Conditions: 150 mM KOAc, 10 mM MgCl2 and 150 mM bicine (pH 8.5), 24 C. An RNA of 177 nucleotides, treated with DMS and 2A3 and read out base by base. DMS adducts were read by reverse transcription with MarathonRT. Values cover nucleotides 27 to 126. The DMS profile rests on 2,463 reads. Source: RMDB library OK2TST, as collected in RNAgym.

RNA sequence: GGGAACGACUCGAGUAGAGUCGAAAAGGCCAUAUGCUCUACGCUGCGCAAUGGAGGUCAGAGUUCGUUCUGCCACUCGGAUCUCUUCACUUGUGGGGCGUGAAUUGGGCAAGAACGAACCUUUGCACCAUACCGACCUGUUCGCAGGUCGGUAUGGAAAAGAAACAACAACAACAAC
Reactivity to DMS in 0.01 (KOAc 150mM, MgCl2 10mM, bicine 150mM(pH8.5), 24C), signal-to-noise 3, nucleotides 027 to 126: g020g050c060c030a110u010a130u000g000c020u010c020u000a050c080g000c030u010g010c010g000c030a020a040u000g000g010a030g010g000u000c050a050g000a040g010u000u000c050g000u010u020c110u030g000c130c050a070c020u000c020g000g010a030u000c000u000c010u010u000c040a040c160u000u000g020u000g000g010g000g010c040g000u000g000a120a170u000u010g000g020g010c040a050a100g040a090a080c120g010a100a110c050c010u010u010u000g010c190a240
Reactivity to 2A3 in 0.01 (KOAc 150mM, MgCl2 10mM, bicine 150mM(pH8.5), 24C), signal-to-noise 2, nucleotides 027 to 126: g060g010c020c000a060u070a080u160g030c020u030c010u030a040c060g020c080u090g190c020g000c030a000a060u050g020g000a030g000g030u030c010a000g020a000g030u020u080c020g040u110u020c060u120g090c050c010a130c030u000c010g000g000a040u020c020u000c000u110u130c050a080c070u040u030g020u010g050g060g020g000c010g000u020g010a040a100u090u090g010g010g000c020a020a020g040a030a000c040g020a010a030c010c010u000u070u100g050c060a070